Chemical mapping of a 177-nucleotide RNA with 2A3 and DMS. The RNA was probed in 150 mM KOAc, 10 mM MgCl2 and 150 mM bicine (pH 8.5) at 24 C. DMS adducts were read by reverse transcription with MarathonRT. Source: RMDB library OK1LIB, as collected in RNAgym.
[RMDB]
RNA sequence: GGGAACGACUCGAGUAGAGUCGAAAAAUGCGCGAGGAUGUGUUCGUGUGUAACGGUGAGCCCUGCGACCCGAACGAGACGGAGACCGUCGUGGAGCUUCUCGAGCGUGUCGCGAGUAGAGGGAAGCGCACCAUAUGGGGUUCGCCCCAUAUGGUGCAAAAGAAACAACAACAACAAC
Reactivity to 2A3 in 0.01 (KOAc 150mM, MgCl2 10mM, bicine 150mM(pH8.5), 24C), signal-to-noise 3, nucleotides 027 to 126: a000u190g000c040g000c030g000a030g060g030a080u160g160u060g020u130u040c010g030u010g000u010g020u140a040a040c050g000g090u090g080a020g050c000c000c010u010g010c010g000a020c070c000c000g000a030a010c020g010a000g020a030c040g090g010a060g050a130c040c020g240u300c040g020u150g020g020a020g020c000u070u000c010u010c010g070a040g010c020g020u000g020u020c000g000c070g010a020g010u160a060g030a050g010g010g010a020a010g030c020
Reactivity to DMS in 0.01 (KOAc 150mM, MgCl2 10mM, bicine 150mM(pH8.5), 24C), signal-to-noise 2, nucleotides 027 to 126: a070u010g000c020g010c010g020a040g030g000a050u040g060u000g000u020u010c080g080u060g000u000g000u010a090a070c100g000g010u000g010a150g020c000c040c040u000g000c010g000a050c030c010c010g000a010a040c000g000a040g000a070c160g000g000a100g000a110c020c050g000u020c150g000u020g020g000a170g010c010u000u000c010u000c060g040a070g010c000g000u000g010u000c010g000c040g000a160g000u090a050g010a070g010g000g000a110a140g000c180